[RMDB]
RNA sequence: GGGAACGACUCGAGUAGAGUCGAAAACGUCGUGAACUAGCGACAAUGCCGUAGAUCGAUCGUUAUCUAACCGAAACAUCGUGACUAGUCGUAGAAUAGAACCAGGAGCGGACGCUGACAAACAAAGACGUUAUCUCAGAUUCGUCUGAGGUAACGUAAAAGAAACAACAACAACAAC
Reactivity to 2A3 in 0.01 (KOAc 150mM, MgCl2 10mM, bicine 150mM(pH8.5), 24C), signal-to-noise 9, nucleotides 027 to 126: c050g010u010c000g010u030g070a110a060c050u030a070g020c000g010a010c000a020a050u140g040c020c020g040u060a030g010a090u030c030g000a010u010c070g020u030u030a150u080c040u040a050a110c050c040g020a030a020a010c020a020u030c010g030u030g040a040c030u030a020g030u040c020g050u050a030g050a130a080u090a070g050a040a030c020c030a030g020g040a030g020c020g010g020a010c020g000c040u030g020a020c020a030a110a000c030a020a110a010g110
Reactivity to DMS in 0.01 (KOAc 150mM, MgCl2 10mM, bicine 150mM(pH8.5), 24C), signal-to-noise 9, nucleotides 027 to 126: c150g000u000c010g020u010g010a110a090c100u020a100g010c010g000a030c030a100a080u030g010c040c030g010u020a090g010a100u010c020g000a050u000c130g010u010u000a100u010c050u010a080a090c170c100g000a050a050a050c080a030u010c020g010u010g010a120c080u000a100g010u000c020g010u010a060g000a080a090u020a060g010a070a100c050c040a070g000g000a100g010c030g010g000a030c050g020c040u010g000a030c090a060a070a070c160a050a090a080g010